[RMDB]
RNA sequence: GGGAACGACUCGAGUAGAGUCGAAAAGCAUCUUGCUUCGGCAAGAUGCAAAUAACGGUCAGUGCUUGCAGCUAGUCGUAAAUGCUAACUGGCGUUACGCUAAAACGAAUGCGUUCGCGCAUUCGAACCGACCACAUUAGUUCGCUAAUGUGGUCGGAAAAGAAACAACAACAACAAC
Reactivity to DMS in 0.01 (KOAc 150mM, MgCl2 10mM, bicine 150mM(pH8.5), 24C), signal-to-noise 2, nucleotides 027 to 126: g000c000a000u000c000u020u000g010c030u010u030c180g010g010c000a000a000g000a010u000g000c000a040a040a040u020a030a070c070g000g020u000c050a040g010u000g000c130u010u000g000c040a050g010c040u000a090g030u010c150g000u020a020a020a070u010g000c000u000a060a040c100u010g000g000c030g010u000u000a010c100g010c080u030a040a040a090a190c020g000a010a010u000g000c030g020u000u020c230g000c010g020c010a000u000u000c000g010a060a150
Reactivity to 2A3 in 0.01 (KOAc 150mM, MgCl2 10mM, bicine 150mM(pH8.5), 24C), signal-to-noise 2, nucleotides 027 to 126: g000c000a000u030c000u020u000g010c000u030u020c130g070g000c000a000a000g000a000u000g020c020a010a000a000u050a020a010c030g060g060u080c030a000g000u000g100c090u080u110g030c010a030g020c050u110a040g110u160c050g090u070a090a080a100u140g000c020u030a040a120c050u070g020g020c010g000u020u030a080c110g000c090u100a050a050a020a030c010g000a020a010u000g010c000g010u010u050c250g010c000g000c030a000u000u020c000g000a020a020